[RMDB]
RNA sequence: GGGAACGACUCGAGUAGAGUCGAAAAUGCGAGGGGAUGUAUGGUUAAAUUCAAAAAUAACACAUGGGGUUGCUGCCGUAUUCGCAAUGUGCCAUCGUACUGCACUAUGGGCACUGAUGCAGUGUGGACAGAUGACCCGAUUCGUCGGGUCAUCUGUAAAAGAAACAACAACAACAAC
Reactivity to 2A3 in 0.01 (KOAc 150mM, MgCl2 10mM, bicine 150mM(pH8.5), 24C), signal-to-noise 1, nucleotides 027 to 126: u140g030c010g000a050g000g000g000g010a080u060g000u080a040u120g010g170u010u070a020a040a020u080u070c110a030a040a000a040a000u240a130a040c180a000c000a000u070g000g000g010g000u000u010g000c020u060g000c000c010g000u050a110u020u050c090g000c020a000a070u050g000u030g000c000c000a000u100c030g030u000a080c110u260g010c100a030c030u000a030u030g080g020g030c040a000c000u040g030a120u130g000c070a040g000u040g000u070g010g000
Reactivity to DMS in 0.01 (KOAc 150mM, MgCl2 10mM, bicine 150mM(pH8.5), 24C), signal-to-noise 2, nucleotides 027 to 126: u010g070c090g020a000g000g120g000g000a010u020g000u000a030u000g020g010u030u000a020a080a000u020u020c290a030a050a030a190a240u000a080a010c080a080c050a050u000g000g010g000g080u000u000g010c020u000g000c040c010g010u000a000u000u010c050g000c020a100a110u040g010u010g000c010c000a140u030c070g000u120a060c200u020g020c090a020c080u010a080u030g000g040g010c060a020c120u000g000a270u020g010c000a050g030u040g000u060g010g000